[RMDB]
RNA sequence: GGGAACGACUCGAGUAGAGUCGAAAAAUGCGGCGGGGCCAGCAGGGCGGCGACACUACGGCCGAUGAACGUACCGCCGUAGCGGUCGGUCACCCUAGCGUUGGCCCGAUGUAGCGCCAUCUCGGCCGUACAAGCCCACGUUCGCGUGGGCUUGUACAAAAGAAACAACAACAACAAC
Reactivity to DMS in 0.01 (KOAc 150mM, MgCl2 10mM, bicine 150mM(pH8.5), 24C), signal-to-noise 1, nucleotides 027 to 126: a140u000g020c050g010g000c020g000g000g090g000c000c000a080g140c020a050g000g000g010c110g040g000c010g030a030c000a050c020u000a000c000g000g010c020c150g000a100u070g000a010a050c300g010u080a250c300c230g000c030c000g000u000a020g000c260g000g000u000c020g020g000u000c030a050c000c000c040u000a020g040c010g000u000u040g000g000c000c010c000g020a000u000g030u010a120g100c010g000c080c060a140u000c030u070c050g000g010c250c110
Reactivity to 2A3 in 0.01 (KOAc 150mM, MgCl2 10mM, bicine 150mM(pH8.5), 24C), signal-to-noise 1, nucleotides 027 to 126: a000u160g000c010g090g010c040g040g030g060g000c000c000a010g010c000a000g000g000g000c040g000g040c010g000a000c000a000c010u000a000c020g000g080c170c000g090a110u170g130a160a080c120g060u130a070c060c040g000c010c000g000u000a000g000c110g020g030u020c070g100g000u040c000a010c010c000c000u050a140g000c110g070u030u100g020g000c000c010c000g000a000u000g000u080a050g000c010g000c010c040a010u010c010u000c080g160g000c000c050